RNA sequence: GGGAACGACUCGAGUAGAGUCGAAAAGAUAUGGAACUGAUAAGAGUUACGAAUGCAUGAACUACCAAGAAGUAUCGGAAACGAUACGGAUUGGCAUGCACUAUAACUCUUAUCAGUUCCUAAGUCACCUGUACCACUACUUCGGUAGUGGUACAGGAAAAGAAACAACAACAACAAC
Reactivity to DMS in 0.01 (KOAc 150mM, MgCl2 10mM, bicine 150mM(pH8.5), 24C), signal-to-noise 1, nucleotides 027 to 126: g000a040u030a300u000g000g000a010a000c000u030g010a000u000a000a070g000a000g000u000u030a070c150g070a030a190u000g030c000a000u000g010a070a180c100u070a300c030c000a040a000g010a300a300g030u000a000u000c000g000g000a070a080a220c000g030a030u000a010c010g000g000a300u000u000g010g000c000a000u000g040c000a000c010u040a120u000a000a000c000u000c000u000u000a030u000c040a030g030u000u000c000c000u010a030a040g000u000c000a230
Record summary: The record gives the reactivity of an RNA of 177 nucleotides to DMS. DMS adducts were read by reverse transcription with MarathonRT. The RNA was probed in 150 mM KOAc, 10 mM MgCl2 and 150 mM bicine (pH 8.5) at 24 C. It was measured as part of the RMDB library TTRINS.